Structure probing data (DMS and 2A3) for a 207-nucleotide construct. Reactivities are given for positions 27 through 156. It was measured as part of the RMDB library M2RFPK. For DMS, 5,418 sequencing reads were counted.
RNA sequence: GGGAACGACUCGAGUAGAGUCGAAAAGGUAUGAUUAGGGUGAGACCUAGGAACCGUAGGGGUAUUCUCAAAGGAAGCCUUUGCAGUGACGCCCAUGUAAGUGGGAUAUAACAACAGAACUCGUAUGUGUGGCACAGAGAGUUCGCUCUCUGUGCAAGUAGUAUACCAUGUUCGCAUGGUAUACUACAAAAGAAACAACAACAACAAC
Reactivity to DMS in 0.01 (KOAc 150mM, MgCl2 10mM, bicine 150mM(pH8.5), 24C), signal-to-noise 2, nucleotides 027 to 156: g030g010u010a020u010g010a150u000u000a060g020g000g020u000g000a170g000a140c020c020u000a120g020g010a110a020c020c040g040u000a040g010g000g010g010u000a030u010u000c030u000c050a090a210a140g000g000a070a120g040c010c030u000u010u020g010c030a040g010u000g020a140c070g000c010c000c000a040u000g010u010a070a140g020u000g000g010g010a060u000a050u000a080a090c070a070a100c040a130g010a110a100c040u010c070g010u010a110u000g000u000g010u000g020g010c000a010c000a040g000a050g020a030g040u000u000c300g000c000u000c000u000c010u000g000u010g010c000a000a030
Reactivity to 2A3 in 0.01 (KOAc 150mM, MgCl2 10mM, bicine 150mM(pH8.5), 24C), signal-to-noise 5, nucleotides 027 to 156: g050g010u090a040u160g060a120u130u120a050g040g000g000u050g060a060g020a030c020c030u030a030g030g080a040a030c050c050g030u050a030g000g030g000g000u050a300u140u030c050u030c050a070a070a010g080g010a060a010g000c000c010u050u040u050g020c040a030g010u010g040a020c060g020c010c000c010a010u050g070u140a100a100g010u010g000g030g010a020u040a010u030a150a040c080a010a020c010a060g090a090a040c040u050c120g050u110a090u120g090u010g020u070g050g000c000a000c000a000g000a000g000a000g000u050u040c100g060c010u000c000u000c000u000g000u000g000c000a000a000